Background: An RNA of 207 nucleotides, treated with 2A3 and DMS and read out base by base. It was measured as part of the RMDB library OK3TST. For 2A3, 5,617 sequencing reads were counted. The reactions ran in a buffer of 150 mM KOAc, 10 mM MgCl2 and 150 mM bicine (pH 8.5), at 24 C. For DMS, 6,688 sequencing reads were counted.

RNA sequence: GGGAACGACUCGAGUAGAGUCGAAAAAUGCUGGGAUUACAUGUGUGAGCCACUAAGCCUGGCAAUGAAUGGUAUUUCUUAACCCAGUUAAUGAAUGGUCUUAGGAUUCACGGUUUCAUCAAGACACACUGAAUCAUUUCUGUUAACAUCCCAUUCACUGUAAGAGAACGUUCGCGUUCUCUUACAGAAAAGAAACAACAACAACAAC
Reactivity to 2A3 in 0.01 (KOAc 150mM, MgCl2 10mM, bicine 150mM(pH8.5), 24C), signal-to-noise 7, nucleotides 027 to 156: a000u070g000c010u020g000g000g030a070u090u110a100c060a230u080g030u000g040u070g110a090g110c050c010a010c020u040a060a010g050c010c020u030g000g020c030a010a050u060g020a010a010u030g000g030u070a090u060u130u030c080u110u090a080a070c010c010c010a020g020u040u080a030a060u090g050a030a030u050g040g020u030c080u100u100a060g090g050a060u080u040c030a030c180g040g040u040u070u030c080a140u090c050a090a030g020a020c030a000c010a020c090u020g030a030a020u010c020a040u050u110u050c050u050g070u050u040a040a020c010a050u040c000c010c000a000u010u030c030a010
Reactivity to DMS in 0.01 (KOAc 150mM, MgCl2 10mM, bicine 150mM(pH8.5), 24C), signal-to-noise 3, nucleotides 027 to 156: a080u000g010c020u010g020g030g000a100u000u000a040c090a070u000g040u000g030u000g010a200g030c040c010a060c050u000a060a090g020c070c020u020g020g030c020a030a060u000g020a070a040u000g010g000u000a080u020u000u000c000u010u000a070a150c010c010c010a140g020u000u000a070a080u000g010a070a050u000g000g010u000c030u010u010a090g000g000a110u000u000c040a020c060g010g040u000u010u000c100a120u010c160a080a120g000a050c040a060c070a090c020u000g000a050a050u010c000a100u000u000u000c050u020g030u010u000a030a080c070a120u000c030c000c000a070u000u000c040a230